Conditions: 150 mM KOAc, 10 mM MgCl2 and 150 mM bicine (pH 8.5), 24 C.
Structure probing data (2A3 and DMS) for a 177-nucleotide construct.
DMS adducts were read by reverse transcription with MarathonRT.
Values are in units of 0.01, from 0 to 300, in steps of 10.
2A3 adducts were read by reverse transcription with SuperScript II with manganese.
The 2A3 profile rests on 48,824 reads.
RNA sequence: GGGAACGACUCGAGUAGAGUCGAAAACUGUGGCUGCCUGCCGACUUCCAGCUGGUCGAGCUGACCGCCCGCCGCUCGCAGGUCCGCGUCAUCGAACAGUGGCUCGGCAUGAAGGCGAUGCUGAGCGGUACUUGAAGAAAUUCGUUUCUUCAAGUACAAAAGAAACAACAACAACAAC
Reactivity to 2A3 in 0.01 (KOAc 150mM, MgCl2 10mM, bicine 150mM(pH8.5), 24C), signal-to-noise 9, nucleotides 027 to 126: c020u040g050u100g120g000c020u030g010c000c010u030g010c010c010g030a030c010u150u030c050c020a060g040c040u060g020g030u050c020g030a040g030c070u040g060a040c010c020g010c000c010c010g030c010c020g040c040u060c040g010c030a040g000g040u030c030c030g020c040g040u040c010a090u050c020g050a060a040c020a060g040u060g120g000c010u000c000g010g000c010a010u060g120a070a040g070g000c050g060a110u060g000c010u020g010a010g010c050g030
Reactivity to DMS in 0.01 (KOAc 150mM, MgCl2 10mM, bicine 150mM(pH8.5), 24C), signal-to-noise 9, nucleotides 027 to 126: c060u000g020u010g010g010c040u000g010c050c020u000g010c030c020g010a060c110u000u000c060c050a100g010c040u000g010g010u000c020g010a080g010c110u010g010a050c050c040g000c040c020c040g020c030c100g010c080u010c090g020c050a070g010g000u000c040c080g020c090g010u010c040a090u010c040g000a050a060c100a080g020u000g010g010c300u000c010g010g000c020a060u000g010a110a090g000g010c040g000a060u000g010c010u000g000a040g010c050g010